[RMDB]
RNA sequence: GGGAACGACUCGAGUAGAGUCGAAAAGCUCCACAGAAUCGGAGUACGUCGCGCUCACCAGGACUGUGCAGGAAGGCAUAUGGCUACGGGCGUCUCUUCAUCACCUCAAUCUUCCAUGUCCUGCACCGAUCGAUUACCCUUUCGAGGGUAAUCGAUCAAAAGAAACAACAACAACAAC
Reactivity to 2A3 in 0.01 (KOAc 150mM, MgCl2 10mM, bicine 150mM(pH8.5), 24C), signal-to-noise 5, nucleotides 027 to 126: g030c020u000c030c010a050c020a090g190a120a090u210c110g020g000a050g060u060a050c020g040u030c040g000c010g000c000u030c030a050c010c000a020g040g030a060c080u080g010u030g060c030a020g080g050a080a030g090g010c050a050u090a060u260g080g000c030u050a050c070g040g010g000c000g080u010c010u000c000u060u090c050a090u070c030a070c020c010u060c030a040a120u030c040u090u020c030c030a070u060g040u010c000c000u020g010c020a030c020c060
Reactivity to DMS in 0.01 (KOAc 150mM, MgCl2 10mM, bicine 150mM(pH8.5), 24C), signal-to-noise 1, nucleotides 027 to 126: g000c060u000c080c000a000c040a110g000a130a010u050c050g000g000a110g010u000a030c110g000u020c060g000c050g050c050u030c030a030c040c080a130g010g000a040c050u010g000u000g010c000a050g000g000a100a080g000g100c020a100u000a050u030g000g000c250u000a040c200g000g020g010c080g040u010c110u000c030u020u040c080a010u000c050a060c040c010u010c030a050a100u010c080u000u000c030c060a100u010g000u000c000c000u000g020c080a010c100c150
Source: RMDB library OK1LIB, as collected in RNAgym.
This 177-nucleotide RNA was probed chemically with 2A3 and DMS.
The reactions ran in a buffer of 150 mM KOAc, 10 mM MgCl2 and 150 mM bicine (pH 8.5), at 24 C.
Reactivities are given for positions 27 through 126.
For DMS, 1,452 sequencing reads were counted.